Structure probing data (2A3 and DMS) for a 177-nucleotide construct. For DMS, 1,032 sequencing reads were counted. For 2A3 the reverse transcriptase was SuperScript II with manganese. The data come from the RNA Mapping Database (RMDB), library OK2TST.
[RMDB]
RNA sequence: GGGAACGACUCGAGUAGAGUCGAAAAGAGCAGUUUACUUUCGCUAACCAAAAUGUGCAAAAAGCACUAGCUGGCUUUCGUCUGCUCCGGGCCGAUGUUACCCGCAAUGAUCAGGGAAGCACAGUGAGGAUACUGAUCCUUUCGAGGAUCAGUAUCCAAAAGAAACAACAACAACAAC
Reactivity to 2A3 in 0.01 (KOAc 150mM, MgCl2 10mM, bicine 150mM(pH8.5), 24C), signal-to-noise 2, nucleotides 027 to 126: g040a010g000c020a010g010u100u110u190a140c040u120u110u110c090g010c080u030a040a090c010c000a020a000a010a120u070g000u010g000c080a130a130a070a290a290g000c000a010c000u020a030g000c020u010g000g000c000u000u020u020c040g110u000c020u000g050c020u000c050c020g000g020g000c020c030g060a200u200g040u140u180a080c020c020c020g000c030a090a240u170g000a030u090c010a050g050g000g000a020a000g000c080a050c010a300g020u030g050a070
Reactivity to DMS in 0.01 (KOAc 150mM, MgCl2 10mM, bicine 150mM(pH8.5), 24C), signal-to-noise 2, nucleotides 027 to 126: g010a080g040c030a070g000u010u000u020a090c090u000u010u010c140g010c050u000a100a200c040c050a060a110a130a060u010g010u000g010c000a030a070a030a140a070g000c010a000c000u050a280g000c060u000g000g000c000u000u010u000c030g010u000c010u000g010c130u010c050c040g020g000g020c150c090g000a090u000g020u010u040a070c000c030c000g010c300a120a050u000g020a000u000c000a030g000g020g010a040a010g000c010a040c060a010g020u010g000a190